[RMDB]
RNA sequence: GGGAACGACUCGAGUAGAGUCGAAAAGUAGCCGUUGCUGCUUAAGCGAGUUUCUAGUGCCACUUUGUCACUAGUUUGUAUUAUGAGUUUCACACUCACUUCAAUGACGGUGAUAGAUACUACAUAUCACUCCUGCUUAGAGGGUCAUCUAAGCUAAGUUAAAGAAACGGUUCGCCGUUUCUUUAACAAAAGAAACAACAACAACAAC
Reactivity to 2A3 in 0.01 (KOAc 150mM, MgCl2 10mM, bicine 150mM(pH8.5), 24C), signal-to-noise 8, nucleotides 027 to 156: g030u020a010g020c070c080g120u070u240g000c030u010g000c010u060u040a070a020g060c070g070a060g050u060u090u060c010u000a000g000u000g040c050c030a140c180u180u210u260g040u100c010a010c000u010a020g010u040u070u140g060u030a130u160u040a060u120g020a020g040u040u170u220c080a070c000a010c040u020c010a020c030u120u110c100a120a220u170g040a070c070g040g000u000g010a020u030a030g060a040u050a110c030u030a040c070a070u060a010u040c010a000c030u040c000c020u080g000c000u010u000a000g000a010g010g030g070u100c020a020u000c050u000a000a000g000c000u000a130a010
Reactivity to DMS in 0.01 (KOAc 150mM, MgCl2 10mM, bicine 150mM(pH8.5), 24C), signal-to-noise 3, nucleotides 027 to 156: g020u000a120g030c010c050g000u000u000g000c000u000g010c020u000u000a040a090g000c040g010a080g050u000u000u000c000u000a050g030u010g020c070c060a120c210u000u000u020g020u000c000a030c030u000a050g020u000u000u010g010u000a130u000u000a090u000g000a080g010u000u000u000c110a100c130a120c010u000c010a030c020u000u000c080a100a110u000g010a050c050g050g010u000g010a040u000a030g010a110u010a100c100u000a060c050a220u000a090u010c030a040c040u000c020c050u000g010c000u000u000a010g010a030g010g010g010u000c110a060u000c010u000a010a020g010c000u000a040a200